RNA sequence: GGGAACGACUCGAGUAGAGUCGAAAACUCUCACCUAAUUUAAAUGUUUUCUCUAAUAAAUGUCUUGUAUACUUUACUUAGAUAAUAACGAUUUUGUCGUAAGUCCAGGACCUUCGCCAACAUCGAAACUAAGCCCACUUUUCGAAGUGGGCUUAGUAAAAGAAACAACAACAACAAC
Reactivity to 2A3 in 0.01 (KOAc 150mM, MgCl2 10mM, bicine 150mM(pH8.5), 24C), signal-to-noise 2, nucleotides 027 to 126: c030u080c000u000c050a190c000c040u150a070a290u160u090u200a170a120a090u160g010u040u020u080u000c060u020c010u000a000a060u030a300a110a030u120g000u000c090u080u090g040u110a010u050a130c060u000u100u000a040c030u150u080a040g060a050u030a180a080u130a080a080c030g060a060u030u020u020u080g120u020c000g010u000a040a000g060u010c060c030a000g020g190a110c040c020u000u060c020g030c010c000a000a000c000a020u160c040g120a110a000